[RMDB]
RNA sequence: GGGAACGACUCGAGUAGAGUCGAAAAGACCUUCAGUUCGCUGAAGGUCGAUGAUGGUAAGAGAGAUUACCAUCUGUAAAGUGAUAUGGAUAAGAUCUCUCAGUGAACGUGCUUUCGAGCACGUUAAAGAUUGAUGUAAUUUCGAUUACAUCAAUCUAAAAGAAACAACAACAACAAC
Reactivity to 2A3 in 0.01 (KOAc 150mM, MgCl2 10mM, bicine 150mM(pH8.5), 24C), signal-to-noise 9, nucleotides 027 to 126: g000a000c000c000u000u000c000a030g000u020u120c180g030c110u000g000a000a000g000g000u000c000g000a000u020g000a000u010g000g050u040a150a030g010a000g000a000g000a010u010u020a010c000c000a010u000c010u020g100u090a110a110a070g120u100g200a150u110a090u300g190g050a070u070a150a090g020a060u000c000u000c000u000c020a010g070u050g190a030a000c000g000u000g000c000u090u070u120c220g050a010g000c010a000c000g000u000u000a000a000
Reactivity to DMS in 0.01 (KOAc 150mM, MgCl2 10mM, bicine 150mM(pH8.5), 24C), signal-to-noise 9, nucleotides 027 to 126: g010a010c000c000u000u000c000a010g010u000u010c230g030c000u000g010a020a000g010g010u000c000g000a030u010g000a060u000g010g010u000a050a150g000a020g000a020g000a020u000u000a030c010c010a010u000c010u000g010u010a060a090a120g020u010g000a130u010a080u010g010g010a130u010a060a090g000a030u000c000u000c000u000c010a240g010u010g000a030a010c000g010u000g010c000u000u000u010c200g010a020g010c000a000c000g000u000u000a020a080